[RMDB]
The data come from the RNA Mapping Database (RMDB), library ARCHII. This 207-nucleotide RNA was probed chemically with 2A3 and DMS. 2A3 adducts were read by reverse transcription with SuperScript II with manganese.
RNA sequence: GGGAACGACUCGAGUAGAGUCGAAAAGUGGGAUACGUUUCAACUUUCCGUCUGUAAGUUGAAAAAGAGAACAUCAGACUAGCGAUACAGAAUGCCUGUCACUCGGCAAGCUGUAAAGUGAAUCCUUAAAUGAGUUGACUAUGAACGUAGAUUUUUAACCAUUAACGUACUUCGGUACGUUAAUGGUAAAAGAAACAACAACAACAAC
Reactivity to 2A3 in 0.01 (KOAc 150mM, MgCl2 10mM, bicine 150mM(pH8.5), 24C), signal-to-noise 6, nucleotides 027 to 156: g130u150g010g040g030a030u020a070c010g000u010u010u010c000a000a000c000u010u010u010c000c020g010u000c000u010g010u010a000a010g000u000u000g020a010a000a000a010a000g070a020g040a140a040c040a080u070c000a000g000a000c000u000a000g000c000g010a010u000a010c000a000g020a090a060u040g000c000c000u030g000u030c000a000c020u010c000g000g000c010a020a010g030c000u000g000u010a010a020a000g000u010g010a010a020u110c050c090u130u200a040a040a050u120g000a010g040u140u070g060a020c030u080a120u270g110a100a030c120g040u050a070g020a300u030u040u020u010u070a080
Reactivity to DMS in 0.01 (KOAc 150mM, MgCl2 10mM, bicine 150mM(pH8.5), 24C), signal-to-noise 2, nucleotides 027 to 156: g020u000g020g040g040a060u000a120c050g000u010u020u000c020a020a020c010u000u000u000c060c060g010u000c020u030g000u000a040a020g000u010u000g000a020a010a030a100a050g020a240g020a070a110c050a060u000c020a030g000a040c020u000a200g030c030g000a300u000a010c040a060g020a000a150u000g000c010c000u010g000u010c020a080c080u000c040g020g030c010a060a080g020c000u020g000u000a020a040a300g010u000g020a110a020u010c110c100u010u000a040a050a100u000g040a030g020u000u000g000a080c000u020a100u000g000a040a140c070g000u000a130g000a200u000u000u020u000u000a150